An RNA of 177 nucleotides, treated with 2A3 and DMS and read out base by base. The data come from the RNA Mapping Database (RMDB), library TTRINS. For DMS the reverse transcriptase was MarathonRT. The 2A3 profile rests on 8,856 reads. Conditions: 150 mM KOAc, 10 mM MgCl2 and 150 mM bicine (pH 8.5), 24 C.

[RMDB]
RNA sequence: GGGAACGACUCGAGUAGAGUCGAAAAGAUAUGGAGUGUGUGAGAGGUAUGAAUUACCGAGGUUGAUCGGAAACGAUCAACUACCCACCGGUAAUUCAUACUACCCACCUCAUCACACUCCUAAGUCCAUACUAGCCCUGUUCGCAGGGCUAGUAUGAAAAGAAACAACAACAACAAC
Reactivity to 2A3 in 0.01 (KOAc 150mM, MgCl2 10mM, bicine 150mM(pH8.5), 24C), signal-to-noise 2, nucleotides 027 to 126: g110a000u140a060u290g010g000a020g000u000g010u000g010u010g030a090g010a020g040g040u060a020u020g010a000a010u010u010a010c010c010g010a030g020g000u000u000g000a010u000c000g050g000a070a080a040c010g000a000u010c010a010a000c010u030a040c040c060c020a070c030c020g000g000u010a000a000u000u000c000a000u010a000c010u020a010c020c040c000a050c010c000u030c010a050u280c000a000c000a010c000u010c000c000u010a070a020g000u000c020
Reactivity to DMS in 0.01 (KOAc 150mM, MgCl2 10mM, bicine 150mM(pH8.5), 24C), signal-to-noise 5, nucleotides 027 to 126: g010a070u000a300u000g010g020a030g010u000g030u010g030u010g010a000g000a100g040g020u000a000u010g000a040a000u000u000a000c000c000g000a100g040g000u000u000g000a030u000c000g050g000a120a120a240c000g010a030u000c000a000a010c000u000a030c050c040c070a300c140c010g010g010u000a000a010u010u000c000a010u000a010c040u000a020c070c060c160a300c120c000u000c010a020u000c020a000c010a000c000u000c000c010u000a010a090g000u010c040